[RMDB]
RNA sequence: GGGAACGACUCGAGUAGAGUCGAAAAGAUAUGGAACGUGCGCGAUAAGCUGGUGUCGGAAACGACACACAGCUUUUGACGUCACGUUCCUAAGUCAAAGUGAGAAGCUGUUCGCAGCUUCUCACAACUCUAAGGAGAGCUUCGGCUCUCCUUAGAGAAAAGAAACAACAACAACAAC
Reactivity to 2A3 in 0.01 (KOAc 150mM, MgCl2 10mM, bicine 150mM(pH8.5), 24C), signal-to-noise 2, nucleotides 027 to 126: g020a020u020a020u050g000g010a010a000c010g020u000g010c120g050c040g120a180u080a300a070g010c010u000g010g000u020g000u000c010g010g000a090a020a020c000g030a000c000a030c030a000c010a010g000c000u010u010u020u080g010a010c000g010u190c000a000c000g000u000u010c000c000u010a020a010g020u010c040a110a100a100g020u010g000a020g000a010a000g010c010u010g050u090u160c300g030c130a000g000c010u020u000c000u000c000a000c000a000a000
Reactivity to DMS in 0.01 (KOAc 150mM, MgCl2 10mM, bicine 150mM(pH8.5), 24C), signal-to-noise 3, nucleotides 027 to 126: g010a030u000a230u020g000g000a010a000c010g060u000g000c090g000c010g030a100u000a020a010g020c000u010g010g020u010g000u000c000g000g000a080a070a120c000g010a000c010a000c000a050c000a000g000c000u000u000u000u010g010a090c000g000u000c010a000c000g020u000u000c000c000u010a000a080g010u000c060a080a110a140g000u000g010a020g000a010a000g010c000u000g020u000u020c210g020c010a010g010c000u000u000c000u000c000a000c010a010a070
Chemical mapping of a 177-nucleotide RNA with 2A3 and DMS.
2A3 adducts were read by reverse transcription with SuperScript II with manganese.
For DMS the reverse transcriptase was MarathonRT.